An RNA of 177 nucleotides, treated with 2A3 and DMS and read out base by base. The data come from the RNA Mapping Database (RMDB), libraries RFM100 and RFMREP. The RNA was probed in 150 mM KOAc, 10 mM MgCl2 and 150 mM bicine (pH 8.5) at 24 C.
[RMDB]
RNA sequence: GGGAACGACUCGAGUAGAGUCGAAAAAAGGGUGUAGCCUAUGAUCAACACAAAUAUGAAAUAUUGGUCCUGGAUGGGCGCGUUUUCUCUGUCAAUGCUCUUCUGGGCUGAACUCCUCUGGAUCAUUAACUUAUCACCUUUUCGAAGGUGAUAAGUUAAAAGAAACAACAACAACAAC
Reactivity to 2A3 in 0.01 (KOAc 150mM, MgCl2 10mM, bicine 150mM(pH8.5), 24C), signal-to-noise 6, nucleotides 027 to 126: a000a010g060g010g000u090g020u060a040g030c020c010u040a070u080g050a060u070c040a050a050c020a020c040a110a140a020u300a100u110g100a070a080a010u190a070u080u100g000g000u110c000c020u020g060g040a040u030g050g010g010c020g010c020g030u040u000u090u050c070u010c030u040g110u090c060a060a130u110g010c000u010c000u080u030c010u030g010g000g010c000u010g010a030a030c010u000c010c010u030c050u040g030g000a020u020c010a040u030u030
Reactivity to DMS in 0.01 (KOAc 150mM, MgCl2 10mM, bicine 150mM(pH8.5), 24C), signal-to-noise 4, nucleotides 027 to 126: a060a070g020g000g010u010g010u010a070g020c020c000u010a040u010g020a040u000c030a060a060c190a050c090a070a070a060u010a090u020g000a090a070a110u010a120u040u000g000g000u010c010c070u020g020g030a070u010g000g000g010c020g010c110g000u010u000u010u020c050u010c050u010g000u020c080a070a100u010g020c050u000c050u000u010c080u020g000g000g030c020u010g000a020a060c070u000c010c000u010c090u000g020g000a150u020c050a110u010u010
Values cover nucleotides 27 to 126.